[RMDB]
RNA sequence: GGGAACGACUCGAGUAGAGUCGAAAAACUACCUCUGCAGAUGGGCCCAAAAGCACAAGAACUGGAGGUUUCAGAAGACGAGGCAGACGUGGCUCCUGCUGCACAUGUAUGACAGUGACAAGGUUCACUAUACGCGUGAGUUCGCUCACGCGUAUAGAAAAGAAACAACAACAACAAC
Reactivity to DMS in 0.01 (KOAc 150mM, MgCl2 10mM, bicine 150mM(pH8.5), 24C), signal-to-noise 2, nucleotides 027 to 126: a080c070u000a080c010c030u000c120u000g040c030a010g010a130u000g000g000g020c040c040c030a100a150a140a130g000c020a040c060a090a190g010a120a080c030u000g000g040a190g010g020u010u000u000c040a060g000a110a040g000a120c200g000a090g000g000c000a050g000a160c120g000u020g010g000c020u030c020c030u000g020c000u010g000c070a020c080a030u020g010u000a080u000g000a060c100a030g010u000g010a090c130a110a130g010g000u000u000c030a070